[RMDB]
The record gives the reactivity of an RNA of 177 nucleotides to DMS and 2A3. 2A3 is a SHAPE reagent: it acylates the 2'-hydroxyl of flexible nucleotides of all four kinds. For DMS the reverse transcriptase was MarathonRT. The RNA was probed in 150 mM KOAc, 10 mM MgCl2 and 150 mM bicine (pH 8.5) at 24 C. Reactivities are given for positions 27 through 126. For 2A3, 2,946 sequencing reads were counted.
RNA sequence: GGGAACGACUCGAGUAGAGUCGAAAAAUGAAGACAGGAUACCAAGAUGCAAAUGCCUGGUUAAAAUGCAUCAAAUAUUCCAUCUGCACGUUAAACAAAAGCAAUUGUUAUGCUUGUGCACAUGGCAUAGACAGAACCAAUUCGUUGGUUCUGUCUAAAAAGAAACAACAACAACAAC
Reactivity to DMS in 0.01 (KOAc 150mM, MgCl2 10mM, bicine 150mM(pH8.5), 24C), signal-to-noise 4, nucleotides 027 to 126: a080u010g010a110a070g010a210c060a010g020g010a090u000a090c100c060a080a090g010a030u000g000c030a070a160a090u010g000c020c040u010g000g020u010u010a030a030a080a120u000g000c010a020u000c000a120a080a080u020a090u010u000c000c000a020u000c160u000g000c000a010c020g000u020u000a070a080a120c300a040a110a030a020g010c070a050a070u000u010g020u030u000a090u010g010c040u000u000g020u000g000c000a020c120a010u000g000g010c300a120
Reactivity to 2A3 in 0.01 (KOAc 150mM, MgCl2 10mM, bicine 150mM(pH8.5), 24C), signal-to-noise 3, nucleotides 027 to 126: a000u080g020a070a030g110a080c020a010g000g000a030u030a150c050c020a030a020g010a040u020g000c020a020a060a120u200g040c000c000u040g080g050u050u090a080a140a030a060u080g010c000a000u010c020a000a040a030u200a020u100u040c000c000a010u010c010u010g000c000a000c020g050u140u230a180a140a010c100a020a110a030a000g060c010a060a150u110u090g110u170u080a040u120g010c000u070u150g000u000g010c000a000c000a020u020g000g010c010a040
Source: RMDB library OK2TRN, as collected in RNAgym.
For DMS, 3,091 sequencing reads were counted.
2A3 adducts were read by reverse transcription with SuperScript II with manganese.